[RMDB]
RNA sequence: GGGAACGACUCGAGUAGAGUCGAAAAACGGACUACGGUCCGAAGGGUUCGGGGUAUUAGUGUGAAUGCCCGGCUAGUACCCUGUGCUAGUGGUUUAUCUACUGAUGUUCAAUUAAGGGCAUUUGAAAAAAGACUCCUAACUUCGGUUAGGAGUCAAGAAGGAGAAUGUGUUCGCACAUUCUCCUUCAAAAGAAACAACAACAACAAC
Reactivity to 2A3 in 0.01 (KOAc 150mM, MgCl2 10mM, bicine 150mM(pH8.5), 24C), signal-to-noise 1, nucleotides 027 to 156: a000c000g000g000a000c000u010a000c300g110g000u000c010c030g020a120a050g100g010g000u110u060c010g000g020g010g020u010a000u020u010a010g020u020g030u040g230a020a000u000g000c000c000c000g000g000c000u000a000g010u000a000c010c000c000u010g070u040g020c020u040a020g030u010g070g040u100u230u220a110u140c020u020a010c030u040g120a130u170g150u180u220c170a090a140u200u210a280a300g000g000g000c000a000u050u020u000g020a070a000a000a000a000a000g000a000c000u000c000c000u030a000a060c000u030u030c130g060g000u010u010a000g020g000a030g010u000c000a000a000
Reactivity to DMS in 0.01 (KOAc 150mM, MgCl2 10mM, bicine 150mM(pH8.5), 24C), signal-to-noise 1, nucleotides 027 to 156: a120c040g010g010a030c000u000a090c160g060g000u020c000c000g000a060a050g040g020g010u000u000c050g010g000g020g020u000a010u020u010a060g040u000g000u000g000a030a060u000g040c010c000c050g010g000c000u000a060g010u010a000c030c030c000u020g030u010g020c020u020a090g030u010g010g000u010u000u000a160u080c040u010a120c050u000g000a110u000g020u000u030c090a090a210u010u000a140a100g050g000g030c010a000u010u000u040g000a020a070a020a100a110a190g000a010c020u000c010c020u010a010a010c000u000u000c250g060g000u000u000a000g020g000a020g000u010c000a000a030
Description: An RNA of 207 nucleotides, treated with 2A3 and DMS and read out base by base. Reactivities are given for positions 27 through 156. The data come from the RNA Mapping Database (RMDB), library M2RFPK. Conditions: 150 mM KOAc, 10 mM MgCl2 and 150 mM bicine (pH 8.5), 24 C. For 2A3, 533 sequencing reads were counted. For 2A3 the reverse transcriptase was SuperScript II with manganese.